[RMDB]
RNA sequence: GGGAACGACUCGAGUAGAGUCGAAAACAACGUUCUUAGAAACCAAUUAAUUUUUCAACUGGACUUACCCGAAUACUCUUGCGAGCAUCCUCAUUCGGGAUUUGUUCGUCAUUUUAUACCUAUUAACUAAUGGGUUUUACUUCGGUAAAACCCAUUAAAAAGAAACAACAACAACAAC
Reactivity to 2A3 in 0.01 (KOAc 150mM, MgCl2 10mM, bicine 150mM(pH8.5), 24C), signal-to-noise 1, nucleotides 027 to 126: c020a010a000c020g000u000u080c040u050u040a070g100a190a060a030c030c040a100a120u240u150a030a190u170u170u110u020u000c110a070a050c050u020g000g000a000c010u000u080a130c040c000c000g000a010a000u110a020c020u000c000u210u180g050c110g010a010g030c040a060u110c000c080u060c090a070u030u080c000g000g020g060a040u000u010u020g000u010u000c000g000u000c030a000u000u020u080u170a110u040a020c010c010u040a090u120u020a110a000c000
Reactivity to DMS in 0.01 (KOAc 150mM, MgCl2 10mM, bicine 150mM(pH8.5), 24C), signal-to-noise 1, nucleotides 027 to 126: c040a010a300c040g050u000u010c020u000u010a100g000a070a080a040c300c120a020a150u000u040a010a000u040u000u000u020u020c060a100a040c030u040g020g000a100c050u000u000a120c000c000c050g000a010a010u000a020c010u000c090u010u000g020c160g000a080g000c130a080u000c010c030u000c190a020u000u010c000g000g000g020a130u000u000u000g000u000u000c070g020u080c120a040u000u010u000u000a010u020a000c160c000u020a080u000u070a040a150c210
Structure probing data (2A3 and DMS) for a 177-nucleotide construct. The 2A3 profile rests on 399 reads. 2A3 adducts were read by reverse transcription with SuperScript II with manganese. The data come from the RNA Mapping Database (RMDB), library OK1LIB.